[RMDB]
RNA sequence: GGGAACGACUCGAGUAGAGUCGAAAAGAUAUGGACGCUGCUAGACAUGUGCCCAGUCGGAAACGACUGAAGGCACAACAGCUAGUCAGCGUCCUAAGUCAAAGGAAACGGGUUCGCCCGUUUCCAACGACAUUCCUAAGUUCGCUUAGGAAUGUCGAAAAGAAACAACAACAACAAC
Reactivity to DMS in 0.01 (KOAc 150mM, MgCl2 10mM, bicine 150mM(pH8.5), 24C), signal-to-noise 3, nucleotides 027 to 126: g010a030u000a180u010g000g010a020c000g010c000u000g010c000u000a010g000a050c110a110u020g030u000g010c000c010c010a000g020u000c000g000g010a050a050a090c000g030a020c000u000g010a140a100g010g010c000a000c000a020a060c290a140g000c000u000a000g000u010c010a010g020c010g010u010c000c000u000a010a060g000u000c010a090a130a190g000g000a010a010a000c000g020g020g010u000u020c280g000c000c000c000g010u000u000u000c000c010a040a030
Reactivity to 2A3 in 0.01 (KOAc 150mM, MgCl2 10mM, bicine 150mM(pH8.5), 24C), signal-to-noise 3, nucleotides 027 to 126: g020a020u030a000u120g000g010a000c000g010c000u000g000c010u020a030g040a130c060a300u250g000u000g000c000c000c020a020g000u000c010g020g020a040a020a020c020g020a000c000u010g100a120a160g000g000c030a000c010a030a020c020a030g030c000u010a000g110u260c040a000g000c000g000u010c000c000u010a000a000g010u010c000a000a000a100g010g000a000a000a000c000g010g000g060u100u180c300g150c040c000c000g000u010u000u000c000c000a000a010